[RMDB]
RNA sequence: GGGAACGACUCGAGUAGAGUCGAAAACUACCUGCGUACUCACCUACCGGGUUACAUGGUUCCGGCUUCCGUCAAUGUACUACCGGAAUUGCCGUUAACCUCAAAUGGCAAGGUAGACCGCAAGGCCGCUUCAAGAAGGUUUCGACCUUCUUGAAGCAAAAGAAACAACAACAACAAC
Reactivity to DMS in 0.01 (KOAc 150mM, MgCl2 10mM, bicine 150mM(pH8.5), 24C), signal-to-noise 3, nucleotides 027 to 126: c020u000a120c000c000u000g010c030g000u000a100c200u000c080a040c070c040u000a090c030c030g000g000g010u000u000a040c140a070u010g000g020u000u000c300c010g010g000c080u010u000c090c120g000u000c040a080a080u000g030u000a060c100u010a090c080c000g020g000a060a090u000u000g020c050c030g000u000u010a030a050c060c010u010c150a060a060a100u000g010g020c030a030a070g020g000u000a060g010a070c200c010g000c020a010a070g020g010c170c090
Reactivity to 2A3 in 0.01 (KOAc 150mM, MgCl2 10mM, bicine 150mM(pH8.5), 24C), signal-to-noise 3, nucleotides 027 to 126: c020u030a030c000c000u000g030c010g040u050a100c010u020c050a020c040c000u020a030c010c010g020g000g000u010u020a040c050a100u140g060g010u110u000c000c000g020g030c050u160u030c050c060g050u050c060a140a290u240g080u160a100c020u040a030c040c000g040g000a050a070u100u120g030c040c000g000u040u020a010a010c010c000u060c020a110a160a080u170g010g000c060a050a010g010g000u010a020g010a080c070c020g010c020a040a050g040g000c050c040
This 177-nucleotide RNA was probed chemically with DMS and 2A3. Values cover nucleotides 27 to 126. The data come from the RNA Mapping Database (RMDB), library OK2TST. Conditions: 150 mM KOAc, 10 mM MgCl2 and 150 mM bicine (pH 8.5), 24 C. 2A3 adducts were read by reverse transcription with SuperScript II with manganese.